Source information:
The record gives the reactivity of an RNA of 177 nucleotides to 2A3 and DMS.

RNA sequence: GGGAACGACUCGAGUAGAGUCGAAAAUGUACUCUGAUCUUGAGUGAUUUCAAGGCAGUCCAAGGACCCCCUGUGGUAGCAAGAUUCAGGUAGCAAUGUAUUCCAUGUGGGAGAGUAUGAUCCGGACCAUGACCAGAAGAUUCGUCUUCUGGUCAUGAAAAGAAACAACAACAACAAC
Reactivity to 2A3 in 0.01 (KOAc 150mM, MgCl2 10mM, bicine 150mM(pH8.5), 24C), signal-to-noise 2, nucleotides 027 to 126: u100g000u000a020c000u000c030u070g220a230u070c010u030u040g020a020g000u090g090a190u100u190u030c010a000a020g020g000c020a000g030u000c030c020a080a160g120g010a030c010c020c000c050c030u040g000u000g070g020u030a040g010c030a060a000g010a120u160u120c040a020g150g040u080a010g020c030a090a010u100g020u050a140u130u040c000c000a020u100g030u080g070g000g000a040g020a000g020u020a000u120g040a050u030c030c000g020g010a000c030
Reactivity to DMS in 0.01 (KOAc 150mM, MgCl2 10mM, bicine 150mM(pH8.5), 24C), signal-to-noise 5, nucleotides 027 to 126: u010g010u000a030c030u000c010u010g000a090u000c010u010u010g010a030g010u020g010a120u010u020u010c020a050a060g000g010c070a070g010u010c020c030a110a160g030g000a120c020c030c050c020c030u010g010u010g020g020u000a050g010c040a070a080g000a120u010u010c080a080g010g010u000a070g000c090a090a070u000g010u000a120u010u000c020c030a060u000g010u000g010g010g010a060g010a050g010u000a040u010g000a120u000c020c020g020g010a190c210
Source: RMDB library OK2TRN, as collected in RNAgym. Reactivities are given for positions 27 through 126. The RNA was probed in 150 mM KOAc, 10 mM MgCl2 and 150 mM bicine (pH 8.5) at 24 C.